[RMDB]
RNA sequence: GGGAACGACUCGAGUAGAGUCGAAAAUCGCCCUCGCGGCGUAAGUUCACCUCAGCCAUCUGAAGAGGCCGUCAGACCGGGAACUGUUCUCUACCCGGAGCCUGGCGUCAGUGAGAGAACUCGCUUCUGCGUUGAGUAUCAGGGCGCAGAGGGACUUAAUAAAGAACGAGUUCGCUCGUUCUUUAUUAAAAGAAACAACAACAACAAC
Reactivity to DMS in 0.01 (KOAc 150mM, MgCl2 10mM, bicine 150mM(pH8.5), 24C), signal-to-noise 1, nucleotides 027 to 156: u010c000g000c000c000c000u010c110g000c120g000g040c060g000u000a000a070g010u020u000c010a000c040c000u000c010a110g020c040c050a190u000c050u000g000a120a140g040a160g000g010c020c050g030u000c060a080g000a110c000c000g140g040g000a070a220c050u000g020u010u000c010u000c030u000a300c020c000c000g010g000a070g020c100c020u020g000g020c020g010u000c070a060g040u000g040a090g000a120g010a080a100c050u000c080g060c000u010u000c010u000g000c000g030u000u010g000a180g050u000a140u010c080a070g000g020g030c000g020c050a050g000a030g010g000g010a090c090u060u010
Reactivity to 2A3 in 0.01 (KOAc 150mM, MgCl2 10mM, bicine 150mM(pH8.5), 24C), signal-to-noise 2, nucleotides 027 to 156: u070c000g010c010c000c000u110c180g050c260g010g000c010g020u030a080a030g020u020u020c080a160c240c010u040c020a030g030c040c020a220u080c100u130g050a170a040g030a150g060g000c010c000g000u000c010a010g010a040c010c000g030g000g000a020a000c090u140g030u040u000c000u000c000u000a010c000c000c010g030g010a060g170c040c010u000g010g000c010g040u060c030a050g100u090g130a030g010a010g000a000a000c000u010c120g040c000u000u000c000u010g010c010g010u000u040g040a050g050u070a070u300c120a050g040g000g000c010g010c000a000g000a000g000g000g000a000c000u020u020

Chemical mapping of a 207-nucleotide RNA with DMS and 2A3. It was measured as part of the RMDB library ARCHII. Reactivities are given for positions 27 through 156. For 2A3, 1,484 sequencing reads were counted. For 2A3 the reverse transcriptase was SuperScript II with manganese. As a SHAPE reagent, 2A3 marks flexible, mostly unpaired nucleotides at the ribose 2'-OH. The RNA was probed in 150 mM KOAc, 10 mM MgCl2 and 150 mM bicine (pH 8.5) at 24 C. DMS (dimethyl sulfate) methylates the pairing face of unpaired adenines and cytosines.